[RMDB]
Notes: Chemical mapping of a 177-nucleotide RNA with 2A3 and DMS. DMS adducts were read by reverse transcription with MarathonRT. The reactions ran in a buffer of 150 mM KOAc, 10 mM MgCl2 and 150 mM bicine (pH 8.5), at 24 C.
RNA sequence: GGGAACGACUCGAGUAGAGUCGAAAAAUAAAGCGUAAUCGCAUCCCAGUAGCAAAGACCAGCGUAAAGGCGAAAGCCGAACUCAAGAUCGCAUCGGGCUAAGAUGCGAUCGUAGCCACGCAAAAAACAUGUUGUGCAAGUUCGCUUGCACAACAUGAAAAGAAACAACAACAACAAC
Reactivity to 2A3 in 0.01 (KOAc 150mM, MgCl2 10mM, bicine 150mM(pH8.5), 24C), signal-to-noise 1, nucleotides 027 to 126: a000u130a030a060a020g000c010g050u060a170a020u250c050g000c000a020u020c040c000c000a000g130u090a010g000c120a120a120a020g000a110c040c040a030g060c000g050u110a070a070a000g000g000c010g040a050a000a000g000c000c010g020a040a020c040u050c080a120a060g000a000u020c000g000c000a010u020c010g090g090g000c030u170a100a030g000a010u000g000c000g010a010u000c020g000u000a000g000c040c020a040c030g000c000a070a070a000a000a000a000
Reactivity to DMS in 0.01 (KOAc 150mM, MgCl2 10mM, bicine 150mM(pH8.5), 24C), signal-to-noise 2, nucleotides 027 to 126: a040u020a060a040a110g010c010g030u020a150a170u010c040g010c020a080u000c000c020c020a110g010u020a040g000c090a070a060a120g000a080c150c130a130g000c050g010u000a100a120a100g000g000c000g000a100a030a140g020c020c000g000a060a060c160u000c140a080a090g010a030u000c000g000c000a000u000c010g010g000g040c200u010a110a160g010a010u000g010c020g010a000u000c010g010u000a000g040c040c060a080c050g020c000a000a010a060a040a050a050
It was measured as part of the RMDB library M2PK90.